An RNA of 207 nucleotides, treated with 2A3 and read out base by base.

[RMDB]
RNA sequence: GGGAACGACUCGAGUAGAGUCGAAAAUCGGCGUGUGGUGUCGGUCCUCGCCGAGAACGGUCGUGCCGGUGUCCCGCGGCGUGACGUGAUGUCGCGCAUGGCGAAGUCGAAUCGACCGUAUCUGACGACGGCGCUCGCGGGUCUGGAAGAGGACGGGCGGUGUCAGGGAAUUCGUUCCCUGACACCGAAAAGAAACAACAACAACAAC
Reactivity to 2A3 in 0.01 (KOAc 150mM, MgCl2 10mM, bicine 150mM(pH8.5), 24C), signal-to-noise 1, nucleotides 027 to 156: u050c010g010g000c020g010u090g080u130g020g130u060g010u090c070g070g060u000c010c010u030c000g000c030c000g080a030g000a030a000c000g010g000u010c000g010u000g020c000c030g000g010u030g060u030c020c020c000g020c050g080g000c000g010u010g000a000c010g010u220g080a120u300g010u010c000g010c000g050c100a060u190g120g000c020g000a040a050g080u020c030g030a030a050u010c020g020a000c010c000g010u010a210u000c020u040g040a050c100g030a000c000g000g010c010g000c030u070c020g000c030g000g060g000u020c010u050g000g050a020a040g040a040g060g000a000c050g010g040g000
Reactivities are given for positions 27 through 156.
For 2A3, 943 sequencing reads were counted.